[RMDB]
RNA sequence: GGGAACGACUCGAGUAGAGUCGAAAAAGGCCUCCUAUGCCCAGAGGAAGUUUUCGGGCAGGCUUGCGCCGGUGACUUCCUGGCGCGCGGCUUCCCAGAUUUUGCGGAUCGCCGCGCGUACAGGCGAGUUUUAGCAUCCUUUCGAGGAUGCUAAAACAAAAGAAACAACAACAACAAC
Reactivity to 2A3 in 0.01 (KOAc 150mM, MgCl2 10mM, bicine 150mM(pH8.5), 24C), signal-to-noise 2, nucleotides 027 to 126: a000g080g020c010c020u060c020c020u080a080u220g020c040c020c010a090g000a030g090g020a000a010g000u020u020u080u090c010g030g020g000c020a020g140g210c100u180u120g000c170g190c020c000g000g000u020g010a010c000u030u020c000c020u010g040g000c010g000c000g000c000g000g000c000u030u000c010c010c020a040g060a170u300u300u270u120g020c120g010g010a010u020c110g000c000c000g000c000g050c010g000u000a020c000a000g000g000c000g020a020
Reactivity to DMS in 0.01 (KOAc 150mM, MgCl2 10mM, bicine 150mM(pH8.5), 24C), signal-to-noise 2, nucleotides 027 to 126: a100g020g000c080c030u000c040c050u000a110u000g020c000c000c020a080g020a040g010g000a010a010g000u000u000u000u000c010g020g010g020c000a030g000g020c280u010u010g010c030g030c000c010g010g020u010g010a010c020u000u000c000c010u000g000g020c000g000c010g010c020g000g000c030u000u000c020c000c010a070g000a200u010u010u000u010g030c140g040g000a040u000c220g000c010c010g010c010g010c000g020u000a010c010a050g000g010c040g010a080